RNA sequence: GGGAACGACUCGAGUAGAGUCGAAAAACUUUUUGAUUCGUCAAAAAGUAACUACCGAGAAUGCGACUCGGUAUACGCAAAUAACCCUUGCAAACAAGGGAACAAACUAACGUUUCGACGUUAGUAAGAUGUGUAAUAUCUUCGGAUAUUACACAUCAAAAGAAACAACAACAACAAC
Reactivity to 2A3 in 0.01 (KOAc 150mM, MgCl2 10mM, bicine 150mM(pH8.5), 24C), signal-to-noise 9, nucleotides 027 to 126: a000c010u010u020u000u000u000g010a020u030u040c070g040u000c070a010a010a000a000a000g010u010a020a070c030u020a010c000c010g000a000g050a110a130u270g110c120g140a060c030u010c010g010g020u010a020u030a010c050g000c040a050a060a050u120a090a120c000c000c000u000u020g060c110a110a120a120c010a030a010g020g000g030a030a010c020a010a100a000c000u000a000a000c000g010u000u040u120c220g100a020c000g000u010u000a000g000u010a000a070
Reactivity to DMS in 0.01 (KOAc 150mM, MgCl2 10mM, bicine 150mM(pH8.5), 24C), signal-to-noise 8, nucleotides 027 to 126: a040c010u000u000u000u000u000g010a010u000u010c190g020u000c000a000a000a000a010a010g000u000a080a100c190u000a010c000c000g000a010g010a110a100u010g030c260g010a080c000u000c000g000g000u000a020u010a060c200g010c170a050a060a080u010a120a090c000c000c000u000u000g010c300a110a120a150c050a010a020g000g010g010a100a040c200a040a110a050c000u000a000a000c000g010u000u010u010c210g010a020c000g000u000u010a000g000u000a070a070

Overview:
Chemical mapping of a 177-nucleotide RNA with 2A3 and DMS. DMS adducts were read by reverse transcription with MarathonRT. The RNA was probed in 150 mM KOAc, 10 mM MgCl2 and 150 mM bicine (pH 8.5) at 24 C. 2A3 is a SHAPE reagent: it acylates the 2'-hydroxyl of flexible nucleotides of all four kinds. The data come from the RNA Mapping Database (RMDB), library M2PK50. The DMS profile rests on 11,718 reads.